[RMDB]
RNA sequence: GGGAACGACUCGAGUAGAGUCGAAAAUCAAGAGUACAUCUGGUUACUUUGAUUGUACUCGGAGUAUAUCAAAGUAGCCGAAGGCUAUUACAUGAGACUCAUCUGUCAUGUAAACCAGAUGACAGAAGAUAGUAUUGACAUUCGUGUCAGUACUAUCAAAAGAAACAACAACAACAAC
Reactivity to DMS in 0.01 (KOAc 150mM, MgCl2 10mM, bicine 150mM(pH8.5), 24C), signal-to-noise 9, nucleotides 027 to 126: u020c040a080a100g010a080g000u000a050c020a060u010c030u030g020g000u000u000a010c010u000u000u000g000a010u010u030g060u000a000c010u020c290g010g020a200g020u000a010u000a030u000c010a000a010a010g000u000a010g000c000c000g000a060a070g020g030c090u000a050u010u010a060c080a050u000g000a050g000a080c060u010c090a120u020c090u000g000u000c000a010u000g000u030a040a050a100c280c070a050g000a000u000g000a020c010a040g010a070a070
Reactivity to 2A3 in 0.01 (KOAc 150mM, MgCl2 10mM, bicine 150mM(pH8.5), 24C), signal-to-noise 9, nucleotides 027 to 126: u110c040a060a040g030a020g070u050a100c010a060u030c040u080g010g000u020u010a010c010u020u020u010g020a030u040u230g020u020a010c020u030c110g000g000a060g000u010a030u000a000u020c000a010a020a010g000u000a000g000c010c010g050a070a010g030g000c030u070a060u120u120a060c060a060u090g040a040g050a100c030u040c110a140u020c080u060g060u010c000a010u010g100u270a010a050a110c010c000a000g000a020u010g010a010c010a020g060a050a020

The data come from the RNA Mapping Database (RMDB), library OK1LIB.
This 177-nucleotide RNA was probed chemically with DMS and 2A3.
For DMS, 47,210 sequencing reads were counted.
The RNA was probed in 150 mM KOAc, 10 mM MgCl2 and 150 mM bicine (pH 8.5) at 24 C.
2A3 adducts were read by reverse transcription with SuperScript II with manganese.